RNA sequence: GGGAACGACUCGAGUAGAGUCGAAAAAUCUAUACCACAUGUCUACGAGAGACUAACCGUAUCGAAGCAGAGAUCAAGGAGUUCAUGGUUCCUAUUGCUGUCCCUGUCAAAGAGGUGAUCAUCAAACGUAAGAAGGAUGGUUCUAUCUACUCCAACCAGCUCCUAGUACGUUCGCGUACUAGGAGCUAAAAGAAACAACAACAACAAC
Reactivity to 2A3 in 0.01 (KOAc 150mM, MgCl2 10mM, bicine 150mM(pH8.5), 24C), signal-to-noise 2, nucleotides 027 to 156: a000u160c100u050a130u050a080c000c090a010c000a210u120g080u070c050u000a020c030g030a020g000a040g080a300c080u080a130a030c030c020g050u050a060u140c070g000a010a000g070c070a060g000a000g000a080u040c040a050a120g000g000a040g100u110u100c010a080u040g100g000u110u070c000c010u140a190u090u030g000c050u120g000u100c000c000c090u000g040u030c080a110a110a000g010a040g090g020u060g010a060u050c050a020u030c020a070a040a110c120g120u120a100a000g030a080a010g070g000a000u040g020g000u060u020c000u010a080u010c000u070a100c000u170c080c080a030a030c030c020

Source: RMDB library OK3TST, as collected in RNAgym. Structure probing data (2A3) for a 207-nucleotide construct. For 2A3 the reverse transcriptase was SuperScript II with manganese.